[RMDB]
RNA sequence: GGGAACGACUCGAGUAGAGUCGAAAACGCUGGGAUGCGGGCGUUGGGUUGAGAAUACUGAAGCGCGCACGGUAUUCAAUGAUGCCCGGACGCGAUUCGCAUCCUGUGCUGAAGCGCGCACGGCAACCGAAAGGUGCGAUUUACCAAUUCGUUGGUAUUCAUCUCUACUGUUCGCAGUAGAGAUGAAAAAAGAAACAACAACAACAAC
Reactivity to DMS in 0.01 (KOAc 150mM, MgCl2 10mM, bicine 150mM(pH8.5), 24C), signal-to-noise 1, nucleotides 027 to 156: c020g020c030u000g010g000g010a030u000g010c000g090g010g020c000g000u010u000g010g000g000u000u000g000a130g010a000a010u000a010c000u000g000a030a050g070c000g040c000g010c020a300c020g030g000u010a020u000u030c030a160a280u010g000a090u010g000c000c010c060g030g020a040c080g030c000g030a060u000u000c000g020c020a020u000c010c000u040g000u010g000c030u000g000a050a030g030c010g060c030g010c030a300c030g000g000c030a120a160c000c040g000a100a130a230g040g000u010g000c030g020a110u000u000u000a070c000c010a030a140u000u000c190g000u000u000g020g030u000a130
Reactivity to 2A3 in 0.01 (KOAc 150mM, MgCl2 10mM, bicine 150mM(pH8.5), 24C), signal-to-noise 2, nucleotides 027 to 156: c000g030c000u040g000g000g000a000u000g000c010g040g080g020c000g050u050u060g010g010g000u010u000g010a010g000a010a000u010a010c000u030g060a220a040g020c000g000c000g030c000a010c020g000g000u000a030u010u000c040a120a300u020g010a000u000g030c000c000c000g000g010a020c030g010c030g060a130u170u120c000g000c010a000u010c000c000u000g020u020g000c000u020g030a130a020g000c000g000c000g000c010a010c000g000g000c020a050a030c000c030g070a100a070a020g010g000u000g000c010g020a010u050u050u080a120c040c030a050a090u140u140c190g040u050u020g040g020u100a170
Conditions: 150 mM KOAc, 10 mM MgCl2 and 150 mM bicine (pH 8.5), 24 C. Chemical mapping of a 207-nucleotide RNA with DMS and 2A3. Values cover nucleotides 27 to 156. 2A3 adducts were read by reverse transcription with SuperScript II with manganese. For DMS, 2,534 sequencing reads were counted. It was measured as part of the RMDB library RNAMAK. High 2A3 reactivity points to a flexible backbone, as in loops and unpaired stretches.